[RMDB]
RNA sequence: GGGAACGACUCGAGUAGAGUCGAAAAGGAGUCUAACAUGCUUGCGAGUAUUAGGGUGUUGAAACCCGAAUGCGUAAUGAAAGUGAAUUUCAGAUGUGAUCCGCAAGGUGCAACAUCGACCAGUCUGAAUAACACAGUGUUUCGACACUGUGUUAUUAAAAGAAACAACAACAACAAC
Reactivity to 2A3 in 0.01 (KOAc 150mM, MgCl2 10mM, bicine 150mM(pH8.5), 24C), signal-to-noise 9, nucleotides 027 to 126: g070g000a090g010u010c030u050a030a040c010a030u110g220c010u020u020g010c000g020a060g050u040a050u070u060a040g000g010g020u030g080u110u220g130a150a080a010c000c000c000g000a010a010u040g000c020g040u100a120a080u070g030a040a010a010g120u150g140a160a200u020u040u040c000a010g020a060u060g060u060g050a040u040c020c000g000c020a010a020g000g000u010g030c050a080a030c010a110u060c040g010a030c010c000a010g050u030c030u050g060
Reactivity to DMS in 0.01 (KOAc 150mM, MgCl2 10mM, bicine 150mM(pH8.5), 24C), signal-to-noise 9, nucleotides 027 to 126: g010g010a110g010u000c030u010a130a150c050a040u010g010c030u000u000g000c020g010a100g010u010a030u000u010a120g000g000g010u000g000u010u040g010a120a150a040c010c000c000g000a060a050u000g010c020g000u010a080a130u000g000a040a040a050g010u020g010a110a110u000u000u000c020a050g000a080u020g010u010g000a090u000c060c010g000c130a050a050g000g010u000g000c130a080a060c100a050u010c060g000a080c060c050a100g000u010c060u000g010
Description: The record gives the reactivity of an RNA of 177 nucleotides to 2A3 and DMS.